[RMDB]
RNA sequence: GGGAACGACUCGAGUAGAGUCGAAAACCGGCAUGGUCCCAGCCUCCUCGUCGGCGCCGGCCGGGCAACAUUCCGAGGGGACCGUCCCUCGGUAAUGGCGAAUGGGACCCAGAAAUCUCCUUUGAUUAGACAGAGCGCUUCGGCGCUCUGAAAAGAAACAACAACAACAAC
Reactivity to 2A3 in 0.01 (KOAc 150mM, MgCl2 10mM, bicine 150mM(pH8.5), 24C), signal-to-noise 2, nucleotides 027 to 129: c000c000g030g040c050a040u120g010g000u020c010c010c000a000g080c090c000u000c000c010u070c000g130u090c110g020g030c000g050c000c030g000g050c020c020g020g000g010c020a100a060c070a040u000u000c000c010g020a000g040g000g050g020a070c030c030g210u180c000c080c000u030c000g000g070u000a010a010u110g000g000c000g010a000a000u070g000g000g000a000c000c030c000a030g020a040a010a070u000c040u000c040c040u100u070u000g000a050u070u200a030g010a030
Reactivity to DMS in 0.01 (KOAc 150mM, MgCl2 10mM, bicine 150mM(pH8.5), 24C), signal-to-noise 1, nucleotides 027 to 129: c080c000g000g030c060a050u080g020g020u050c000c000c130a060g030c010c030u070c130c020u060c100g010u020c080g080g050c010g110c060c000g040g090c050c000g080g090g070c000a000a000c090a080u030u120c010c010g050a070g050g050g030g000a270c100c190g040u140c080c000c000u000c000g000g000u110a050a000u000g030g080c100g000a190a000u040g080g090g080a000c000c000c010a060g040a040a060a000u050c040u020c080c070u030u090u020g010a050u090u060a000g000a280
Structure probing data (2A3 and DMS) for a 170-nucleotide construct. High 2A3 reactivity points to a flexible backbone, as in loops and unpaired stretches. The RNA was probed in 150 mM KOAc, 10 mM MgCl2 and 150 mM bicine (pH 8.5) at 24 C. For 2A3, 2,325 sequencing reads were counted.